[RMDB]
RNA sequence: GGGAACGACUCGAGUAGAGUCGAAAAGCUUGUGAAAAUGAUGACUAGUCUAUUGUGCAUCUGGCUGAGGCAUUUAAUCCACUGUGGAGACACCCUUAUUAGAGGAAAUGGAAUGCAAGUUAUGCUUAUCAUGGGGAUAGUGUAUUAGGGCCCAUCCCCUUCUUUGGUCAUUCGUGACCAAAGAAGGAAAAGAAACAACAACAACAAC
Reactivity to DMS in 0.01 (KOAc 150mM, MgCl2 10mM, bicine 150mM(pH8.5), 24C), signal-to-noise 1, nucleotides 027 to 156: g010c020u000u000g040u000g010a070a090a120a070u000g000a040u000g000a080c080u000a100g040u020c040u000a170u000u010g020u010g020c040a180u010c040u000g010g010c000u010g010a110g000g000c050a070u020u000u000a070a130u000c040c050a090c060u040g040u020g050g020a250g000a050c060a080c050c040c010u000u000a070u000u000a130g010a140g000g000a040a060a140u000g000g020a040a090u010g000c040a070a130g000u000u000a070u000g000c070u010u000a130u000c060a100u010g020g000g000g010a070u000a050g020u010g010u000a110u020u000a100g010g050g000c010c000c040a120u000c020c010
Reactivity to 2A3 in 0.01 (KOAc 150mM, MgCl2 10mM, bicine 150mM(pH8.5), 24C), signal-to-noise 2, nucleotides 027 to 156: g020c020u060u070g020u040g090a090a070a130a130u100g040a030u050g000a000c030u040a020g040u000c060u100a170u100u270g060u130g050c010a020u000c080u060g060g000c090u050g030a090g060g050c070a110u000u070u130a060a020u110c040c020a050c050u100g030u050g070g020a010g060a020c020a040c070c000c000u080u090a180u090u180a110g030a010g060g070a080a100a060u090g060g040a040a010u050g000c040a080a000g030u110u110a160u130g000c000u060u070a030u190c050a050u040g000g030g030g000a030u090a100g040u030g030u090a070u030u090a040g000g000g000c000c000c010a030u020c020c020